[RMDB]
RNA sequence: GGGAACGACUCGAGUAGAGUCGAAAAAGUUUAGAUUUCGAUCUAAACUAGACCACUAAGAGGAUCACGAGUGACUACGACGCAUCUAGUAGAAUGCGCCCAGCUGUGAGCAGUUCGCUGCUCACAAAGAAAAAAAGGAUUUCGAUCCUUUUUUUCUAAAAGAAACAACAACAACAAC
Reactivity to 2A3 in 0.01 (KOAc 150mM, MgCl2 10mM, bicine 150mM(pH8.5), 24C), signal-to-noise 1, nucleotides 027 to 126: a000g000u010u000u000a020g000a010u070u050u070c180g030a020u000c010u000a020a000a010c000u020a010g030a050c020c000a020c070u080a200a040g100a010g110g000a080u060c020a000c060g090a080g070u050g070a030c020u070a040c100g060a010c020g000c030a000u000c050u070a070g060u040a020g140a190a020u020g010c040g040c000c020c000a050g020c090u030g000u010g000a010g000c000a010g010u020u130c160g030c100u020g000c000u010c000a000c000a010a010
Reactivity to DMS in 0.01 (KOAc 150mM, MgCl2 10mM, bicine 150mM(pH8.5), 24C), signal-to-noise 3, nucleotides 027 to 126: a040g000u000u000u000a010g000a020u010u010u010c160g010a020u010c000u010a000a000a010c000u000a050g000a190c010c010a090c110u010a070a090g010a060g010g010a060u000c020a060c070g000a090g000u010g010a090c040u000a080c060g000a080c040g030c030a010u000c020u000a120g000u020a090g000a090a020u000g010c050g020c000c000c110a120g010c130u000g020u000g010a010g010c000a010g010u000u030c250g020c000u000g010c000u000c000a000c000a020a060